[RMDB]
RNA sequence: GGGAACGACUCGAGUAGAGUCGAAAACGGCCCCGAGUUCGUGACCGGGUACAACAUCAUCAACUUCGACUGGCCCUUCUUGCUGGCCAAGCUGACGGACAUUUACAAGGUCCCCCUGGACGGGUACGUACGGCUCAUGCUUCGGCAUGAGCCGUACAAAAGAAACAACAACAACAAC
Reactivity to 2A3 in 0.01 (KOAc 150mM, MgCl2 10mM, bicine 150mM(pH8.5), 24C), signal-to-noise 2, nucleotides 027 to 126: c020g040g000c000c010c010c010g010a000g000u000u110c000g000u060g020a020c020c020g030g020g000u190a110c120a200a020c010a060u110c050a110u030c060a140a040c010u200u230c110g120a060c000u110g000g020c020c010c000u030u100c010u010u150g050c060u080g000g040c090c000a030a020g020c040u000g030a200c090g000g000a000c010a090u180u180u020a080c090a080a000g080g000u000c000c000c000c000c000u010g020g100a070c010g060g030g000u030a010c010
Description
The record gives the reactivity of an RNA of 177 nucleotides to 2A3. For 2A3 the reverse transcriptase was SuperScript II with manganese. The reactions ran in a buffer of 150 mM KOAc, 10 mM MgCl2 and 150 mM bicine (pH 8.5), at 24 C. Reactivities are given for positions 27 through 126. The data come from the RNA Mapping Database (RMDB), library OK1LIB.